[RMDB]
This 177-nucleotide RNA was probed chemically with DMS and 2A3. DMS adducts were read by reverse transcription with MarathonRT. The reactions ran in a buffer of 150 mM KOAc, 10 mM MgCl2 and 150 mM bicine (pH 8.5), at 24 C. For 2A3 the reverse transcriptase was SuperScript II with manganese.
RNA sequence: GGGAACGACUCGAGUAGAGUCGAAAAAUGGCUGACCCAUCAUGCCGGCAUUGCCGUCCUGACCCAUCACGGCGAACACAUCAGCGGCCUAGCGCACCUAUCCAAGGUUGUGGUGGCACCCGGUGACCUCUGACGCAUGAUUCGUCAUGCGUCAGAGAAAAGAAACAACAACAACAAC
Reactivity to DMS in 0.01 (KOAc 150mM, MgCl2 10mM, bicine 150mM(pH8.5), 24C), signal-to-noise 1, nucleotides 027 to 126: a100u020g010g000c070u010g000a100c070c010c040a140u000c070a100u000g000c020c010g000g000c050a110u010u010g000c020c020g000u000c020c070u010g000a060c050c000c000a030u000c070a020c050g010g000c020g010a060a070c140a040c090a100u000c090a070g010c150g010g000c030c010u020a060g000c020g010c020a050c040c030u000a120u030c120c130a100a100g010g020u000u000g010u000g000g000u020g000g000c060a080c090c000c000g010g000u010g030a080c200
Reactivity to 2A3 in 0.01 (KOAc 150mM, MgCl2 10mM, bicine 150mM(pH8.5), 24C), signal-to-noise 1, nucleotides 027 to 126: a000u050g000g000c020u040g070a130c040c030c000a060u110c020a030u090g010c060c030g000g000c040a170u000u150g020c040c000g000u000c000c000u050g040a080c000c000c000a000u120c000a010c040g040g000c000g040a090a030c050a000c000a090u120c040a020g020c050g040g000c000c000u070a060g090c040g020c030a020c020c000u050a110u040c070c070a080a070g110g010u090u080g030u080g020g050u060g030g000c030a050c030c010c130g070g000u040g090a060c040